[RMDB]
RNA sequence: GGGAACGACUCGAGUAGAGUCGAAAACGCAGCCACGCCGAAGGACUGAGCGUCACCGGCCUGGCGGCUACGGCAUGGCCAUUUCUCACCGGCACUGGUAUCGGUUGGGUGCUGGCUCGCGGCUGGCCACACUUUAGGUCUUCGGACCUAAAGUGUGAAAAGAAACAACAACAACAAC
Reactivity to 2A3 in 0.01 (KOAc 150mM, MgCl2 10mM, bicine 150mM(pH8.5), 24C), signal-to-noise 7, nucleotides 027 to 126: c090g010c020a010g000c000c000a020c030g000c010c010g050a130a080g170g010a020c040u090g090a060g110c060g030u000c010a020c060c020g000g020c000c020u010g010g000c000g000g000c010u070a030c050g040g010c040a130u120g060g000c000c010a040u050u110u020c020u010c010a030c020c010g000g000c040a040c110u150g110g020u180a180u230c050g050g040u090u080g070g010g000u030g000c020u020g010g020c030u030c050g060c030g040g000c010u020g010g020c000
Reactivity to DMS in 0.01 (KOAc 150mM, MgCl2 10mM, bicine 150mM(pH8.5), 24C), signal-to-noise 4, nucleotides 027 to 126: c100g000c030a060g030c000c010a000c300g010c000c020g000a170a170g020g000a050c020u010g030a160g020c120g000u000c000a170c050c010g010g010c010c060u000g000g010c000g010g010c020u010a050c070g000g020c070a080u000g010g000c010c030a070u040u020u000c020u000c010a190c030c010g000g020c050a120c030u020g020g020u020a110u020c090g020g000u000u020g010g010g010u010g000c020u000g000g000c110u010c150g030c050g010g020c050u030g010g020c030